[RMDB]
RNA sequence: GGGAACGACUCGAGUAGAGUCGAAAAAUGCAGGGCACUUUCUGCUCUGUUCGAUGCUUCCCGGGCCAUUUCCUGUUGUGCCGCUGCAAUCUGACGCGUUGCAUUGAUACCAACCGGUAACCGGGACGCCUGACUAUUAGUUCGCUAAUAGUCAGGCAAAAGAAACAACAACAACAAC
Reactivity to DMS in 0.01 (KOAc 150mM, MgCl2 10mM, bicine 150mM(pH8.5), 24C), signal-to-noise 2, nucleotides 027 to 126: a090u000g000c020a000g010g000g020c010a090c290u010u010u010c120u000g010c020u000c000u000g000u000u010c110g000a100u010g010c100u000u000c000c010c000g000g020g000c060c070a230u010u000u000c020c020u000g020u000u000g010u000g020c090c020g010c070u010g000c010a010a000u000c050u000g020a190c260g000c300g010u000u010g000c040a030u000u000g010a130u000a080c130c050a040a050c040c100g000g000u000a060a090c040c020g010g000g030a040c300
Reactivity to 2A3 in 0.01 (KOAc 150mM, MgCl2 10mM, bicine 150mM(pH8.5), 24C), signal-to-noise 1, nucleotides 027 to 126: a000u100g000c000a040g020g020g000c030a020c100u160u300u040c070u080g020c000u000c000u000g010u030u120c090g120a120u040g110c070u080u060c000c000c000g000g050g080c080c040a130u100u080u080c020c020u030g000u040u030g080u030g070c030c020g000c010u020g000c010a020a040u020c060u240g120a080c110g040c030g040u050u040g020c010a020u010u050g030a030u090a050c120c000a010a010c050c060g000g040u000a040a070c000c010g000g020g000a010c030
Record summary
Source: RMDB library OK2TST, as collected in RNAgym. Structure probing data (DMS and 2A3) for a 177-nucleotide construct. The reactions ran in a buffer of 150 mM KOAc, 10 mM MgCl2 and 150 mM bicine (pH 8.5), at 24 C.